[RMDB]
RNA sequence: GGGAACGACUCGAGUAGAGUCGAAAACGUGGUUAUCAGGAUGCGGAAAUUGGCCCGUGGUUACGCGAGCGGUUAACGCUAUUACAUGCUUCCAGUUUAACCGCGCUGGCGGAAAUUGAACCUCGGCUGGCUGUAACUGUUUCGACAGUUACAGCCAAAAAGAAACAACAACAACAAC
Reactivity to 2A3 in 0.01 (KOAc 150mM, MgCl2 10mM, bicine 150mM(pH8.5), 24C), signal-to-noise 2, nucleotides 027 to 126: c010g020u000g020g010u140u070a040u200c070a080g070g030a020u070g030c000g000g070a050a120a180u060u060g100g020c030c020c040g000u000g030g000u070u080a060c060g000c020g070a030g030c000g000g010u040u040a040a010c020g000c110u010a030u070u210a150c120a120u160g030c000u120u030c020c010a040g030u040u000u020a020a030c000c000g040c000g020c040u020g100g000c050g020g110a030a130a040u170u140g010a060a050c000c000u060c000g050g000c070
Reactivity to DMS in 0.01 (KOAc 150mM, MgCl2 10mM, bicine 150mM(pH8.5), 24C), signal-to-noise 3, nucleotides 027 to 126: c090g010u010g000g010u010u010a070u010c080a090g010g010a090u000g000c050g020g010a050a070a090u000u000g050g010c070c020c020g020u010g000g010u000u000a110c060g030c030g020a120g020c000g000g010u010u020a020a080c140g010c030u020a080u000u020a120c250a040u010g000c070u010u000c100c110a080g030u000u000u000a040a020c020c020g000c020g020c120u020g000g000c040g000g000a050a070a120u010u010g020a060a110c020c030u020c060g000g000c080
About this RNA: Source: RMDB library OK2TRN, as collected in RNAgym. The record gives the reactivity of an RNA of 177 nucleotides to 2A3 and DMS. The RNA was probed in 150 mM KOAc, 10 mM MgCl2 and 150 mM bicine (pH 8.5) at 24 C.